[RMDB]
RNA sequence: GGGAACGACUCGAGUAGAGUCGAAAAGGCUAAAUGCUCAGGAUUUAACGUCAGCAAGGCGUCCAAUAGAAUACAUGCGCGCUCUGCAUGGCCACAUUGUAGUUGUAACCAACCGUUGAGCAGCAAGCCACAACCAUCUCUUCGGAGAUGGUUGUGGAAAAGAAACAACAACAACAAC
Reactivity to DMS in 0.01 (KOAc 150mM, MgCl2 10mM, bicine 150mM(pH8.5), 24C), signal-to-noise 1, nucleotides 027 to 126: g020g030c040u000a060a110a070u010g000c020u000c000a080g020g000a170u000u000u000a080a120c180g020u000c020a030g000c040a000a150g010g030c030g020u000c190c050a070a090u000a170g010a100a070u000a090c220a080u000g010c300g000c060g000c060u010c020u000g000c110a030u000g000g000c050c030a100c090a040u000u030g000u010a080g000u020u060g000u010a100a160c240c050a090a120c150c000g000u000u000g000a020g000c000a100g000c240a060a060g010
The record gives the reactivity of an RNA of 177 nucleotides to DMS. It was measured as part of the RMDB library OK2TRN. Conditions: 150 mM KOAc, 10 mM MgCl2 and 150 mM bicine (pH 8.5), 24 C.